[RMDB]
RNA sequence: GGGAACGACUCGAGUAGAGUCGAAAACAGAGCUGAUGGGCCAUGUACCUAUCCAAAAUGAGAUCCCAUCUUGCACACUGUGCUAAUUUGAGAUUCUCAUGCCACCUACUUGGAGAGAUCUGGACUACUAACUGUAUGACGUUCGCGUCAUACAGAACCGUGGUAUUUCCUUCGGGAAAUACCACGGAAAAGAAACAACAACAACAAC
Reactivity to 2A3 in 0.01 (KOAc 150mM, MgCl2 10mM, bicine 150mM(pH8.5), 24C), signal-to-noise 2, nucleotides 027 to 156: c020a010g050a010g000c040u090g010a060u110g020g030g000c000c040a180u160g070u140a110c000c000u020a010u060c030c030a100a070a000a110u050g000a010g000a060u050c000c000c020a000u000c010u030u040g010c010a020c010a080c130u190g000u010g020c070u170a040a090u020u050u030g030a040g000a020u300u000c010u000c000a000u130g090c040c020a030c020c000u120a090c050u040u100g030g000a030g000a000g000a040u010c020u020g000g070a060c060u140a030c020u060a220a040c010u020g000u000a000u000g000a000c010g030u060u000c130g020c010g090u020c000a000u000a000c000a010g000a010a000